[RMDB]
RNA sequence: GGGAACGACUCGAGUAGAGUCGAAAAGAUAUAGUGGAAGCGGGCUGUAACCGGUCUAGACUUUAAUAGUCUUAUAUCCGACAUGUGUUUAUCAACACAUUCUUAAUUUGUUAUUGAAAAAUGAGGACUAUCUCCAAAAGUUCGCUUUUGGAGAUAGAAAAGAAACAACAACAACAAC
Reactivity to 2A3 in 0.01 (KOAc 150mM, MgCl2 10mM, bicine 150mM(pH8.5), 24C), signal-to-noise 1, nucleotides 027 to 126: g000a000u110a000u030a050g050u040g010g040a090a000g030c040g050g020g000c030u040g060u170a090a100c070c000g000g020u000c010u030a020g010a030c010u110u070u020a230a070u140a130g000u000c000u030u040a060u010a030u100c030c030g080a030c090a090u030g020u010g010u000u010u120a240u200c080a050a020c000a000c000a030u100u000c000u130u200a250a290u060u160u090g060u040u120a080u040u080g040a030a010a110a080a140u090g030a010g000g000a030
Reactivity to DMS in 0.01 (KOAc 150mM, MgCl2 10mM, bicine 150mM(pH8.5), 24C), signal-to-noise 3, nucleotides 027 to 126: g010a080u000a030u000a030g000u000g000g060a140a120g000c020g000g010g030c020u000g010u000a120a130c300c060g010g010u010c050u000a030g010a030c010u000u000u010a090a070u000a040g010u000c000u000u010a020u000a030u010c020c030g020a140c300a020u000g000u000g000u010u000u010a110u030c210a070a020c020a010c010a010u010u000c020u010u010a050a110u020u000u000g000u000u000a100u010u000g000a030a040a040a050a100u000g000a080g000g010a220